[RMDB]
RNA sequence: GGGAACGACUCGAGUAGAGUCGAAAAGAUAUGGAAUGCUGUUGACAUGCUCGUCGGAAACGACCGGAGCAACAGCAACUGCAUUCCUAAGUCAAAAGAUUAUUCGGUCUUCGGACCGAAUAAUCAACUAGCGUGCUAAGUUCGCUUAGCACGCUAGAAAAGAAACAACAACAACAAC
Reactivity to DMS in 0.01 (KOAc 150mM, MgCl2 10mM, bicine 150mM(pH8.5), 24C), signal-to-noise 1, nucleotides 027 to 126: g000a000u000a240u000g000g000a010a020u000g020c010u010g000u000u010g020a200c040a100u000g010c000u000c010g020u000c000g020g000a040a040a070c030g000a020c020c180g020g010a010g030c000a010a020c280a100g000c000a000a000c000u020g000c000a000u000u000c000c000u010a000a080g000u020c020a100a110a110a080g000a000u000u010a040u000u000c010g000g010u000c000u000u000c130g020g000a010c000c000g010a000a000u000a010a010u000c000a070a120